Structure probing data (2A3 and DMS) for a 177-nucleotide construct.

RNA sequence: GGGAACGACUCGAGUAGAGUCGAAAACGGGGUACGAGGGAUUGUAAAGCCUCACAGGGUCUACAGUCCCGUACCCAUAGACUACUUGUGAACUAGACCCUGUGAGGCUUUAGUAAUAAGUAGUCAAGGAACACGGUGAUUUCGAUCAUUGUGUUCCAAAAGAAACAACAACAACAAC
Reactivity to 2A3 in 0.01 (KOAc 150mM, MgCl2 10mM, bicine 150mM(pH8.5), 24C), signal-to-noise 9, nucleotides 027 to 126: c030g010g000g000g010u020a020c030g040a300g030g050g000a010u000u010g020u030a010a010a000g000c000c000u020c050a130c020a010g000g000g000u000c000u010a010c000a010g010u010c010c000c000g000u000a000c000c000c000a000u090a010g000a000c000u010a000c000u020u020g020u020g040a030a010c010u000a010g010a010c000c000c000u060g100u070g040a010g000g000c000u000u000u000a000g000u000a000a030u020a040a000g020u010a000g000u010c030a030a040
Reactivity to DMS in 0.01 (KOAc 150mM, MgCl2 10mM, bicine 150mM(pH8.5), 24C), signal-to-noise 6, nucleotides 027 to 126: c090g000g000g000g010u000a020c070g010a140g010g000g000a030u010u000g000u000a010a010a010g010c000c000u000c030a040c030a020g000g000g000u000c010u000a020c050a020g000u000c000c010c020g010u010a000c020c010c020a030u010a040g000a030c030u000a010c020u000u000g010u010g010a100a070c080u000a010g000a010c000c000c000u000g010u020g000a020g000g000c000u010u000u000a010g010u010a110a030u010a020a020g000u010a020g000u000c030a170a200
Conditions: 150 mM KOAc, 10 mM MgCl2 and 150 mM bicine (pH 8.5), 24 C. DMS adducts were read by reverse transcription with MarathonRT.